Conditions: 150 mM KOAc, 10 mM MgCl2 and 150 mM bicine (pH 8.5), 24 C. An RNA of 207 nucleotides, treated with 2A3 and read out base by base.
RNA sequence: GGGAACGACUCGAGUAGAGUCGAAAACUAACCAGGCUUAGCGGGGAGGACGUGGACCAGCGAGGGUGAUUUGCUGCGUUGACGUGGUGCUCUGCUUGGCUGUGUGUCGGUGUGGCUUGCCCCCCUGCAGAGGGUGGCGCGGGUCCGCCGUUGAAGCGAACCCCAUGUGGUUCGCCACAUGGGGUUCAAAAGAAACAACAACAACAAC
Reactivity to 2A3 in 0.01 (KOAc 150mM, MgCl2 10mM, bicine 150mM(pH8.5), 24C), signal-to-noise 1, nucleotides 027 to 156: c010u040a090a010c000c000a100g030g000c000u020u020a000g000c060g020g000g000g000a010g070g080a020c010g010u010g030g000a010c000c000a000g000c000g040a090g010g050g120u260g220a230u100u050u140g060c000u000g020c050g100u010u000g100a000c020g060u070g040g210u120g110c000u040c000u070g130c010u000u030g040g020c000u000g060u060g000u030g100u050c000g010g020u000g040u120g020g000c000u000u000g020c000c000c000c000c000c000u090g000c000a000g050a040g190g050g060u200g030g090c170g000c060g000g010g010u000c000c000g000c010c020g000u010u170g080a050a000g040c010

Source: RMDB library ARCHII, as collected in RNAgym.